[RMDB]
RNA sequence: GGGAACGACUCGAGUAGAGUCGAAAAGCCUUGGUGUCGAGCAGUUUGCAGUCGUACGACUGUGCUGUGGUGUCGAAGUGCGUCGGAGUGAGCUCCCACCCCUUGGUGGUUGCCAUGAUGUCGAGAGAACUCCUUCCGAGUUCGCUCGGAAGGAGUUAAAAGAAACAACAACAACAAC
Reactivity to DMS in 0.01 (KOAc 150mM, MgCl2 10mM, bicine 150mM(pH8.5), 24C), signal-to-noise 3, nucleotides 027 to 126: g020c030c010u000u000g010g030u000g040u000c030g010a270g000c030a040g000u010u010u020g050c010a000g000u000c020g010u010a110c250g000a050c010u000g010u000g000c020u000g010u010g010g000u010g010u010c040g000a090a120g000u010g010c060g000u010c040g010g010a180g010u010g010a110g030c040u010c080c010c010a130c030c010c230c130u010u030g020g040u000g010g020u000u000g000c000c020a040u000g020a220u010g010u000c030g000a130g000a080g010

Chemical mapping of a 177-nucleotide RNA with DMS. Values cover nucleotides 27 to 126. For DMS the reverse transcriptase was MarathonRT. The DMS profile rests on 3,541 reads. Conditions: 150 mM KOAc, 10 mM MgCl2 and 150 mM bicine (pH 8.5), 24 C.